Overview: Chemical mapping of a 177-nucleotide RNA with DMS and 2A3. The reactions ran in a buffer of 150 mM KOAc, 10 mM MgCl2 and 150 mM bicine (pH 8.5), at 24 C. Source: RMDB library OK2TRN, as collected in RNAgym.
RNA sequence: GGGAACGACUCGAGUAGAGUCGAAAAGAUCGCAGCGCCGAUCGCGCAGUCUCGAUCACUCUGCGCGAUCCGUACAUGCGCCUGUAGCAUGGCGCUAUAGCGUCUCGUCGUAGGCGCGAGAGUCACAGCGAUAAGCAACCUUCGGGUUGCUUAUCGCAAAAGAAACAACAACAACAAC
Reactivity to DMS in 0.01 (KOAc 150mM, MgCl2 10mM, bicine 150mM(pH8.5), 24C), signal-to-noise 2, nucleotides 027 to 126: g000a040u000c030g020c100a160g030c040g010c050c060g030a010u000c010g000c010g040c020a020g000u000c060u010c100g000a090u020c210a090c130u010c000u000g000c000g020c000g000a000u000c000c130g000u010a070c080a030u000g000c020g010c050c030u000g010u000a120g010c090a120u010g020g000c040g020c010u000a030u000a140g010c010g010u010c020u000c120g000u010c130g000u010a060g000g010c010g000c010g010a090g000a070g020u010c010a090c150a100
Reactivity to 2A3 in 0.01 (KOAc 150mM, MgCl2 10mM, bicine 150mM(pH8.5), 24C), signal-to-noise 1, nucleotides 027 to 126: g020a010u090c020g000c110a020g020c040g000c050c040g010a000u000c000g000c010g000c020a000g040u030c050u080c270g190a220u090c100a050c090u010c010u030g020c000g000c020g000a000u020c000c040g010u000a010c010a070u040g000c000g020c020c000u050g010u080a010g070c110a060u060g020g000c000g000c050u020a030u070a090g000c000g040u000c010u000c000g300u050c080g050u190a010g010g000c000g010c010g010a000g000a000g020u060c040a000c070a150